[RMDB]
RNA sequence: GGGAACGACUCGAGUAGAGUCGAAAAGGGCGAUCCUUCGGGAUCGCCCAAAUAAUGGCAGUCGAGUGCAAGAAGCACAGUCAAUAACUGACGCCACGACAAAAAGUACAUGGUUCGCCAUGUACAAGACUUAUUCGUAGUUCGCUACGAAUAAGUCAAAAGAAACAACAACAACAAC
Reactivity to DMS in 0.01 (KOAc 150mM, MgCl2 10mM, bicine 150mM(pH8.5), 24C), signal-to-noise 3, nucleotides 027 to 126: g020g000g000c010g000a020u000c000c000u010u000c180g050g010g010a000u000c010g010c010c000c010a010a010a010u000a070a160u000g010g000c030a100g050u020c020g010a150g000u000g020c010a100a070g020a110a190g000c000a030c010a070g000u000c030a060a160u020a140a090c160u000g000a020c020g010c010c000a050c050g000a060c070a050a060a050a110a130g000u000a000c000a000u000g000g010u000u020c220g000c000c000a020u000g000u010a010c000a060a080
Reactivity to 2A3 in 0.01 (KOAc 150mM, MgCl2 10mM, bicine 150mM(pH8.5), 24C), signal-to-noise 2, nucleotides 027 to 126: g030g030g020c080g020a000u040c050c070u200u130c260g060g000g000a000u000c000g000c000c000c000a000a000a000u000a000a010u030g000g000c020a030g010u010c010g030a010g040u000g030c030a110a160g180a300a000g300c000a010c010a000g030u060c030a040a070u200a120a050c080u070g010a010c010g000c010c030a070c060g080a000c030a020a170a020a020a000g000u010a000c000a000u000g000g030u020u060c160g030c030c010a010u000g000u010a000c000a020a000